Description
Source: RMDB library TTRINS, as collected in RNAgym. Chemical mapping of a 177-nucleotide RNA with DMS. Values are in units of 0.01, from 0 to 300, in steps of 10. DMS adducts were read by reverse transcription with MarathonRT. The RNA was probed in 150 mM KOAc, 10 mM MgCl2 and 150 mM bicine (pH 8.5) at 24 C. Reactivities are given for positions 27 through 126.
RNA sequence: GGGAACGACUCGAGUAGAGUCGAAAAGAUAUGGAGCCGAUAGACAUGUUGCUCUAGGUAAUCUAGUGUCGGAAACGACACCUAGAUUACCUAGAGCAACAACAGCUAUCUUUGGGCUCCUAAGUCACCUAAGAUAUUCGUUCGCGAAUAUCUUAGGAAAAGAAACAACAACAACAAC
Reactivity to DMS in 0.01 (KOAc 150mM, MgCl2 10mM, bicine 150mM(pH8.5), 24C), signal-to-noise 3, nucleotides 027 to 126: g000a050u000a300u010g010g010a020g010c010c010g010a010u000a020g010a070c100a170u010g000u000u000g010c000u000c010u000a010g000g000u000a000a000u000c000u010a050g010u000g020u000c000g010g010a130a090a250c000g010a010c010a010c240c080u000a000g010a020u000u010a000c010c010u000a000g010a000g000c000a000a000c000a010a050c300a110g010c040u000a010u000c030u000u010u010g070g020g020c000u010c000c000u000a000a080g020u010c030a260